[RMDB]
Background:
This 177-nucleotide RNA was probed chemically with DMS and 2A3. It was measured as part of the RMDB library OK2TST. The reactions ran in a buffer of 150 mM KOAc, 10 mM MgCl2 and 150 mM bicine (pH 8.5), at 24 C. Values cover nucleotides 27 to 126. For 2A3, 16,329 sequencing reads were counted. DMS adducts were read by reverse transcription with MarathonRT. For 2A3 the reverse transcriptase was SuperScript II with manganese.
RNA sequence: GGGAACGACUCGAGUAGAGUCGAAAAGUCCGUGUGGCCGAGCGUGCAGCCGUGGCGGCGGCAAGGCUGCGCGGGCGCGGCGAUGAAAUGGCUGCCGAUCAGGCUGCUGUCGAUGCCAUGCGCCAGAUCAUUACUACCCUUUCGAGGGUAGUAAUGAAAAAGAAACAACAACAACAAC
Reactivity to DMS in 0.01 (KOAc 150mM, MgCl2 10mM, bicine 150mM(pH8.5), 24C), signal-to-noise 8, nucleotides 027 to 126: g010u000c120c010g030u000g030u000g000g020c010c010g010a300g000c060g010u010g040c010a040g010c000c050g020u010g020g010c050g010g010c010g000g000c010a080a200g010g010c000u000g010c010g010c040g010g000g010c020g010c040g010g010c010g010a130u010g010a090a110a060u010g010g010c000u000g010c020c000g020a080u010c140a220g000g000c030u000g000c010u000g010u000c030g000a210u010g000c020c020a060u000g000c020g010c040c030a140g010a170
Reactivity to 2A3 in 0.01 (KOAc 150mM, MgCl2 10mM, bicine 150mM(pH8.5), 24C), signal-to-noise 7, nucleotides 027 to 126: g010u000c020c000g000u020g000u010g020g000c010c010g020a030g050c110g080u190g030c040a030g010c020c030g120u160g150g050c060g010g000c010g000g010c010a020a020g070g000c000u010g000c010g000c010g010g060g010c010g000c010g010g000c020g070a140u150g120a110a090a060u110g050g000c010u020g030c020c010g020a120u190c030a020g030g000c030u040g010c010u020g070u040c010g030a050u130g010c010c000a020u060g020c020g030c010c010a060g010a090